[RMDB]
This 207-nucleotide RNA was probed chemically with DMS and 2A3. Conditions: 150 mM KOAc, 10 mM MgCl2 and 150 mM bicine (pH 8.5), 24 C. The data come from the RNA Mapping Database (RMDB), library OK3TST.
RNA sequence: GGGAACGACUCGAGUAGAGUCGAAAACAGGAGCGGCUUUGAAAUGAUUUGGGAUCCAAAUGGGUGGACUGAAACGGACAGUAGCUUUUCAGUGAAACAAGAUAUCGUAGCAAUAACUGAUUGGUCAGGAUAUAGCGGGAGUUUUGUCCAGCAUCCAAGCUAAAUGGGAAUUCGUUCCCAUUUAGCUAAAAGAAACAACAACAACAAC
Reactivity to DMS in 0.01 (KOAc 150mM, MgCl2 10mM, bicine 150mM(pH8.5), 24C), signal-to-noise 1, nucleotides 027 to 156: c060a130g030g010a110g020c040g010g040c040u010u020u030g010a070a120a070u000g000a110u000u000u000g020g000g010a060u000c020c010a030a050a120u000g030g020g060u010g000g010a060c040u020g000a030a080a090c080g010g000a090c030a110g020u000a130g020c040u000u030u000u000c030a050g030u000g000a130a110a060c040a030a060g020a100u000a070u000c110g000u010a080g040c010a120a090u010a060a110c020u010g000a080u000u000g020g020u000c090a080g010g020a060u000a070u000a100g000c040g000g060g000a140g030u000u000u000u010g020u000c000c020a100g000c080a130u000c040c030a160
Reactivity to 2A3 in 0.01 (KOAc 150mM, MgCl2 10mM, bicine 150mM(pH8.5), 24C), signal-to-noise 2, nucleotides 027 to 156: c060a030g060g000a010g020c060g050g000c040u060u030u130g070a060a090a040u110g030a070u130u060u070g030g010g010a010u020c030c030a000a060a120u060g010g010g000u020g020g060a030c040u070g040a050a070a070c040g020g030a000c030a090g090u090a010g070c020u040u010u040u040c020a020g000u020g050a030a020a100c040a050a000g010a080u080a010u060c040g010u000a020g010c010a050a020u070a100a090c030u060g030a080u060u040g050g050u030c040a010g010g030a000u040a010u030a110g030c010g020g070g010a000g000u000u020u170u040g030u060c000c000a000g000c020a030u040c020c020a000
For DMS, 2,410 sequencing reads were counted.